About this RNA:
The record gives the reactivity of an RNA of 177 nucleotides to DMS. The reactions ran in a buffer of 150 mM KOAc, 10 mM MgCl2 and 150 mM bicine (pH 8.5), at 24 C. Values cover nucleotides 27 to 126.
[RMDB]
RNA sequence: GGGAACGACUCGAGUAGAGUCGAAAAUAGUAUUAAAGUCUCCAUGUUGAUAAUGUGGGAUAAUACCGCUAGAAUGUGGAAAAUUUGUAAAUGUGUUCAUUUUAUCUCUCCUUUACCAUACUUGUAAAUACCCACGUAGAUUCGUCUACGUGGGUAUAAAAGAAACAACAACAACAAC
Reactivity to DMS in 0.01 (KOAc 150mM, MgCl2 10mM, bicine 150mM(pH8.5), 24C), signal-to-noise 2, nucleotides 027 to 126: u010a060g000u010a090u020u020a070a050a170g000u000c100u010c000c000a010u020g010u000u010g010a090u020a080a060u030g000u000g010g010g000a100u000a070a100u010a130c060c050g000c040u000a070g010a080a040u000g040u000g020g000a040a080a130a100u000u000u000g010u000a030a050a090u000g000u010g000u000u000c090a040u010u000u010u030a040u000c060u010c030u020c000c020u000u000u010a120c110c090a070u010a040c060u020u030g010u000a060a070